[RMDB]
Record summary:
Chemical mapping of a 177-nucleotide RNA with DMS and 2A3. The data come from the RNA Mapping Database (RMDB), library OK1LIB. Reactivities are rounded to 0.1 and cut off at 0 and 3. For 2A3 the reverse transcriptase was SuperScript II with manganese. The reactions ran in a buffer of 150 mM KOAc, 10 mM MgCl2 and 150 mM bicine (pH 8.5), at 24 C. DMS adducts were read by reverse transcription with MarathonRT.
RNA sequence: GGGAACGACUCGAGUAGAGUCGAAAACCUGGGUCGGUCUCGCGGCGGAUUGAGCACGAAAAUCCAUGCAGCGACCGAAGCGCUUGGCCUGCCGAUACGCCUCAUCGGCACUCCCGGGCAGCGCAACCAGUGGUGGAGCGUUCGCGCUCCACCACUGAAAAGAAACAACAACAACAAC
Reactivity to DMS in 0.01 (KOAc 150mM, MgCl2 10mM, bicine 150mM(pH8.5), 24C), signal-to-noise 1, nucleotides 027 to 126: c000c000u010g020g000g000u000c000g000g000u010c030u000c050g000c030g000g030c040g020g010a000u000u000g040a090g000c040a060c160g070a170a120a000a000u000c000c070a230u020g030c030a110g020c030g000a070c070c010g010a040a010g040c040g050c010u000u090g030g000c060c000u070g000c000c000g000a000u000a070c090g000c120c130u000c080a130u000c060g020g010c020a000c280u000c020c030c010g000g000g030c000a000g020c000g010c000a230a050c160
Reactivity to 2A3 in 0.01 (KOAc 150mM, MgCl2 10mM, bicine 150mM(pH8.5), 24C), signal-to-noise 3, nucleotides 027 to 126: c010c000u010g050g040g000u000c020g000g020u020c030u020c090g000c010g000g000c010g000g000a010u040u050g100a090g090c170a020c180g070a140a100a000a000u000c020c010a080u300g050c000a010g000c000g000a000c000c000g000a070a030g020c020g000c020u080u180g090g070c000c010u050g020c020c000g000a000u030a080c040g050c030c010u060c030a020u020c020g020g010c000a050c060u040c000c000c000g000g000g000c000a010g000c020g030c010a000a060c040